Source: RMDB libraries RFM100 and RFMREP, as collected in RNAgym. The record gives the reactivity of an RNA of 177 nucleotides to DMS and 2A3. The RNA was probed in 150 mM KOAc, 10 mM MgCl2 and 150 mM bicine (pH 8.5) at 24 C.
RNA sequence: GGGAACGACUCGAGUAGAGUCGAAAAGAAAGAAAGAAACUGGCACAGUGAUGACAAGUUACUUUUUGCCGUUUACCCAGCUGAGGGUAUCUUUGAAGAAAUAACUUUAAGACUGAGAUGCCAGUAAUGCACACAUCAAAUUCGUUUGAUGUGUGCAAAAAGAAACAACAACAACAAC
Reactivity to DMS in 0.01 (KOAc 150mM, MgCl2 10mM, bicine 150mM(pH8.5), 24C), signal-to-noise 3, nucleotides 027 to 126: g030a100a120a150g020a120a130a060g020a050a160a060c010u000g000g040c000a070c020a020g000u010g010a100u010g000a130c300a020a000g000u000u000a010c150u000u000u000u000u000g000c150c140g020u030u010u000a010c000c010c000a190g020c220u050g030a170g010g000g020u000a000u000c010u000u010u000g020a040a030g000a010a010a040u010a000a050c020u000u000u000a170a100g020a010c000u020g000a120g000a160u000g000c000c000a010g000u000a060a190
Reactivity to 2A3 in 0.01 (KOAc 150mM, MgCl2 10mM, bicine 150mM(pH8.5), 24C), signal-to-noise 3, nucleotides 027 to 126: g100a000a050a020g120a000a140a040g080a030a170a030c000u000g020g000c000a000c010a040g010u050g210a300u010g000a100c020a020a000g000u030u000a050c040u010u030u000u000u100g130c050c000g070u000u040u000a000c040c000c000a040g060c220u270g110a300g000g000g000u000a000u000c020u070u160u300g070a020a010g040a010a010a030u010a000a010c000u010u020u030a030a000g030a020c000u000g010a040g010a110u030g010c000c000a000g010u010a010a010